[RMDB]
RNA sequence: GGGAACGACUCGAGUAGAGUCGAAAAUGAUGUCGAGCUAGUUGAUUGUUGGAAUCGGCUUAUUGCAAAAAUCUCGGAAGAAACUAAAAUACUGGUAGUGUCCAACAUGACUCCUGACGAAUUGGAACACUCCUACCCAUUUCGAUGGGUAGGAGUGAAAAGAAACAACAACAACAAC
Reactivity to DMS in 0.01 (KOAc 150mM, MgCl2 10mM, bicine 150mM(pH8.5), 24C), signal-to-noise 2, nucleotides 027 to 126: u030g000a080u010g020u000c000g010a190g000c080u000a090g000u000u000g000a090u020u000g000u030u000g000g000a100a100u000c080g020g000c030u040u030a100u000u000g050c090a000a080a010a040a050u000c010u000c040g030g020a090a010g000a030a080a090c060u030a020a010a060a070u000a030c130u000g000g040u000a070g000u000g000u000c000c040a000a060c150a100u000g020a070c030u010c000c020u010g000a080c120g000a110a090u040u030g040g000a000a200
Reactivity to 2A3 in 0.01 (KOAc 150mM, MgCl2 10mM, bicine 150mM(pH8.5), 24C), signal-to-noise 2, nucleotides 027 to 126: u170g030a070u040g010u150c060g000a080g000c160u070a140g060u040u000g030a240u010u010g080u120u000g000g030a060a190u040c000g000g000c000u000u060a110u020u090g010c030a010a000a000a000a130u050c000u000c000g020g080a000a000g080a010a260a000c060u200a060a010a100a030u210a040c070u050g060g000u060a010g010u000g070u070c000c000a060a000c000a050u100g050a040c050u040c010c000u000g060a010c020g010a050a020u050u040g080g020a200a010